[RMDB]
RNA sequence: GGGAACGACUCGAGUAGAGUCGAAAACCGCAUGCCCAGGUGGCCGCGAUCUUCAAGGCUACGGCGCGGAUAGGUCCGCGCUGAUCGUUUUCCUCCAACGACGCUAUGGCGUCUUUCCUUCACCCACAAAAUCGUCUCCCGUUCGCGGGAGACGAAAGAAAAUAACUGUCUUCGGACAGUUAUUUUCAAAAGAAACAACAACAACAAC
Reactivity to 2A3 in 0.01 (KOAc 150mM, MgCl2 10mM, bicine 150mM(pH8.5), 24C), signal-to-noise 1, nucleotides 027 to 156: c030c000g020c080a070u100g020c000c030c070a030g030g010u000g010g000c020c000g090c040g030a020u000c000u060u030c020a000a010g010g010c010u010a000c010g000g000c000g030c010g000g000a010u090a190g100g110u020c010c000g010c000g000c020u010g010a010u000c020g010u070u060u060u070c050c040u040c060c000a060a030c030g000a000c000g000c020u080a070u220g110g010c000g000u030c000u020u030u020c010c000u090u040c010a090c020c040c030a050c030a010a070a020a070u040c000g000u000c010u010c000c030c010g020u060u060c190g000c010g100g000g010a000g010a000c000g000a000a000a000